Structure probing data (DMS and 2A3) for a 207-nucleotide construct.
Source: RMDB library M2RFPK, as collected in RNAgym.
DMS adducts were read by reverse transcription with MarathonRT.
The reactions ran in a buffer of 150 mM KOAc, 10 mM MgCl2 and 150 mM bicine (pH 8.5), at 24 C.
RNA sequence: GGGAACGACUCGAGUAGAGUCGAAAAGUUAUGCUCUCGCUGCCUAAUGGCGGUGCGGGAAACCCACUCUAAAGUCCUUAGGGUUAGCCCCUUAAGGCGGGGUUCGGAGACACCUGGCAACAGAAGCUGAAACUGUGCACAUUCGUGUGCACAGUAAUUCAGUCAAUGGUUUCGACCAUUGACUGAAAAAAGAAACAACAACAACAAC
Reactivity to DMS in 0.01 (KOAc 150mM, MgCl2 10mM, bicine 150mM(pH8.5), 24C), signal-to-noise 1, nucleotides 027 to 156: g050u000u010a050u010g010c020u000c020u010c040g010c030u010g020c000c010u010a120a130u000g010g020c090g010g020u000g010c030g010g040g000a080a060a200c000c000c010a000c090u020c110u020a050a120a060g030u000c030c000u000u010a050g000g010g010u000u000a180g000c160c300c000c020u030u000a050a010g030g070c000g000g000g040g000u000u000c020g000g010a270g020a140c030a060c000c000u000g000g010c050a110a140c030a110g020a050a110g010c010u000g000a050a080a030c000u030g010u010g010c000a040c000a090u000u000c290g010u010g020u000g000c000a000c000a030g010u010a030a040
Reactivity to 2A3 in 0.01 (KOAc 150mM, MgCl2 10mM, bicine 150mM(pH8.5), 24C), signal-to-noise 2, nucleotides 027 to 156: g090u190u100a090u210g050c010u050c000u000c010g020c020u030g030c020c010u240a300a140u240g000g030c000g010g110u050g010c000g030g000g000a000a080a000c000c000c000a000c000u030c080u190a040a160a290g300u020c000c000u010u000a000g040g020g000u030u160a030g060c010c020c000c020u000u080a000a000g000g000c030g000g000g000g010u040u200c070g090g020a060g010a020c010a000c000c000u030g260g000c000a010a000c010a030g030a020a010g010c010u050g050a160a020a000c000u000g000u000g030c010a000c000a000u040u150c180g050u050g000u000g080c000a000c000a000g000u000a000a000